[RMDB]
RNA sequence: GGGAACGACUCGAGUAGAGUCGAAAAACCUUUGUGGAUCUACCAGGCUCAUCGAUCUCCAUCGGUAAACCCAUUGGGUUUAAAUGAUGGAGGGAGAGCCUGAUGAUCCACUCUGGUAAAAGCGUUGUUAUACAGCUUCGGCUGUAUAACAACGCAACCACCUUAGGUUGUUCGCAACCUAAGGUGGAAAAGAAACAACAACAACAAC
Reactivity to 2A3 in 0.01 (KOAc 150mM, MgCl2 10mM, bicine 150mM(pH8.5), 24C), signal-to-noise 3, nucleotides 027 to 156: a000c010c000u030u020u020g000u000g000g010a000u000c010u020a080c040c010a010g000g000c000u010c020a230u300c160g030a080u010c000u000c010c000a000u000c010g110g000u110a020a000a010c060c000c060a300u220u300g000g020g010u000u010u010a070a150a110u100g000a000u000g000g010a000g000g000g010a030g000a010g000c010c000u010g000a000u010g000a000u000c000c000a000c000u000c000u000g030g000u070a070a080a070a010g000c000g000u000u020g010u000u000a010u010a010c000a010g000c010u040u140c240g140g000c000u000g010u010a000u000a000a000c000a000a020c000g000c000a000a010